[RMDB]
RNA sequence: GGGAACGACUCGAGUAGAGUCGAAAAGCACAGGCAGCGACAGUGCGAGCUUUCCCCACACCACCCCGUCCAUGUGCCUCAACCCUGACCUGGAGGGACCACCUCUAGAGGUGAGAGGGGAUGUUCAGAAGUCGGUGAAAUUCGUUUCACCGACUUCAAAAGAAACAACAACAACAAC
Reactivity to DMS in 0.01 (KOAc 150mM, MgCl2 10mM, bicine 150mM(pH8.5), 24C), signal-to-noise 2, nucleotides 027 to 126: g010c010a060c080a100g000g000c000a110g000c040g000a060c140a040g070u000g000c020g000a160g000c050u000u020u000c000c000c020c060a200c190a100c040c020a110c010c030c010c130g000u000c010c010a050u000g000u000g020c010c030u000c010a110a100c170c040c010u000g010a100c130c000u010g000g030a050g000g000g020a160c220c160a110c050c000u000c020u000a000g000a090g000g020u000g010a210g000a050g000g000g000g010a080u000g000u000u000c080a080
Reactivity to 2A3 in 0.01 (KOAc 150mM, MgCl2 10mM, bicine 150mM(pH8.5), 24C), signal-to-noise 2, nucleotides 027 to 126: g040c010a000c030a020g000g080c020a020g030c000g050a060c060a020g080u060g070c000g000a020g000c020u020u070u000c000c000c010c000a010c000a000c010c020a040c000c030c000c000g000u000c000c030a020u060g020u030g070c000c000u020c000a010a050c000c000c050u020g030a040c030c010u020g020g020a000g030g040g040a080c060c100a150c010c020u010c030u050a010g000a060g200g000u020g020a070g010a050g000g000g000g000a000u010g060u080u040c050a010